[RMDB]
RNA sequence: GGGAACGACUCGAGUAGAGUCGAAAAGUAUUCGGUCGUAAGCGCUUCGGUUUCCGCAACGAUCUUGGCCUUCGAUUCCGGGAUGACCAUGUCAUCCUUGCCGAAGGAGAUACCCGCACGGCAAGCAACGGUAAUGACCGUUCGCGGUCAUUACCGUAAAAGAAACAACAACAACAAC
Reactivity to 2A3 in 0.01 (KOAc 150mM, MgCl2 10mM, bicine 150mM(pH8.5), 24C), signal-to-noise 1, nucleotides 027 to 126: g060u020a110u040u070c100g020g030u000c010g060u040a140a060g010c020g010c140u100u070c060g140g000u000u050u020c020c020g000c040a080a030c030g010a010u010c000u040u160g070g000c020c000u010u020c020g090a120u160u020c060c000g030g000g000a000u010g020a000c080c100a190u300g000u060c000a000u000c040c000u000u090g030c000c010g000a040a000g050g000a030g010a000u110a140c000c000c020g000c030a040c050g020g020c040a050a010g030c020a050
Reactivity to DMS in 0.01 (KOAc 150mM, MgCl2 10mM, bicine 150mM(pH8.5), 24C), signal-to-noise 2, nucleotides 027 to 126: g010u010a150u000u010c070g020g000u000c030g000u000a060a100g010c060g010c150u010u010c150g010g040u000u000u010c030c000g030c020a110a050c050g000a000u000c020u020u010g010g000c020c000u000u000c010g010a090u000u010c080c060g010g000g000a000u000g010a010c000c300a210u010g010u000c000a000u000c010c000u000u000g000c300c000g040a000a010g000g020a050g000a110u020a060c030c020c030g020c090a150c100g000g010c080a110a090g000c120a150
An RNA of 177 nucleotides, treated with 2A3 and DMS and read out base by base. The data come from the RNA Mapping Database (RMDB), library OK2TST. The DMS profile rests on 1,217 reads. For 2A3 the reverse transcriptase was SuperScript II with manganese. Reactivities are given for positions 27 through 126. The reactions ran in a buffer of 150 mM KOAc, 10 mM MgCl2 and 150 mM bicine (pH 8.5), at 24 C.